[RMDB]
RNA sequence: GGGAACGACUCGAGUAGAGUCGAAAAUAGUGGCCUCGCUUUAUUGGACCGCAUCGAGGCCACGCGCACGGCAUGCGGUCCAAUAAAGGCCGUGCGCACGGUGGAGAUGCGAAAGCAUUUCCACCGAGCAGCAUGAACCCUUCGGGGUUCAUGCUGCAAAAGAAACAACAACAACAAC
Reactivity to 2A3 in 0.01 (KOAc 150mM, MgCl2 10mM, bicine 150mM(pH8.5), 24C), signal-to-noise 2, nucleotides 027 to 126: u140a000g020u020g030g010c000c000u030c040g070c130u170u230u180a140u060u120g030g000a010c000c000g020c010a040u050c030g000a030g000g000c000c000a000c040g010c000g000c010a010c000g020g000c030a010u020g000c000g000g000u000c020c000a000a000u170a050a050a000g070g000c010c010g020u010g000c000g000c010a050c000g020g000u000g000g010a020g000a000u000g010c010g030a050a000a020g000c000a010u000u000u000c000c000a000c020c000g000a010
Reactivity to DMS in 0.01 (KOAc 150mM, MgCl2 10mM, bicine 150mM(pH8.5), 24C), signal-to-noise 1, nucleotides 027 to 126: u060a080g050u000g000g000c000c000u000c080g040c300u010u000u010a040u000u020g010g000a220c020c010g000c020a110u030c120g000a110g040g020c000c000a000c130g110c010g020c000a020c000g000g000c020a060u000g000c000g030g000u000c000c070a100a040u000a040a040a140g020g000c000c000g000u000g000c010g020c050a280c010g000g000u070g000g000a070g000a000u000g000c000g020a110a040a130g000c000a000u000u000u000c000c000a000c000c000g000a050